[RMDB]
RNA sequence: GGGAACGACUCGAGUAGAGUCGAAAACUGAGGAUUUAAUGAAAGAGGAAGUUAGAAGAUUCGGGCCUUAUGACCUCUUCGACGUUGGUUCAUUAUUCGUCAAGCCUGUGCGUGUUCCAAUUCAGGAUCUGAAACCAGGUUUCGACCUGGUUUCAGAAAAAGAAACAACAACAACAAC
Reactivity to DMS in 0.01 (KOAc 150mM, MgCl2 10mM, bicine 150mM(pH8.5), 24C), signal-to-noise 1, nucleotides 027 to 126: c050u000g020a150g000g000a070u060u010u090a000a050u010g000a090a070a110g050a020g030g000a060a000g000u010u010a010g030a050a040g000a210u010u070c040g020g000g010c070c020u000u060a100u000g000a070c070c030u000c000u000u000c080g010a100c090g000u000u000g010g000u000u030c010a010u000u000a040u000u000c060g000u000c090a120a070g030c040c040u050g020u000g020c110g000u000g000u000u020c030c080a020a180u080u010c080a100g010g000a190
Reactivity to 2A3 in 0.01 (KOAc 150mM, MgCl2 10mM, bicine 150mM(pH8.5), 24C), signal-to-noise 1, nucleotides 027 to 126: c080u080g050a000g040g010a050u000u000u250a090a000u140g080a050a010a030g120a020g170g050a080a040g110u070u150a130g030a160a000g000a080u130u230c110g020g000g020c000c000u070u070a070u200g000a060c000c000u010c000u020u000c000g050a060c110g000u070u160g000g060u000u020c000a040u000u010a010u000u030c020g070u030c010a030a000g050c030c020u060g040u080g050c100g010u050g050u020u000c000c000a020a000u050u050c000a000g000g000a040
Source: RMDB library OK1LIB, as collected in RNAgym. This 177-nucleotide RNA was probed chemically with DMS and 2A3. For DMS the reverse transcriptase was MarathonRT. For 2A3, 561 sequencing reads were counted. Reactivities are given for positions 27 through 126. The DMS profile rests on 1,572 reads.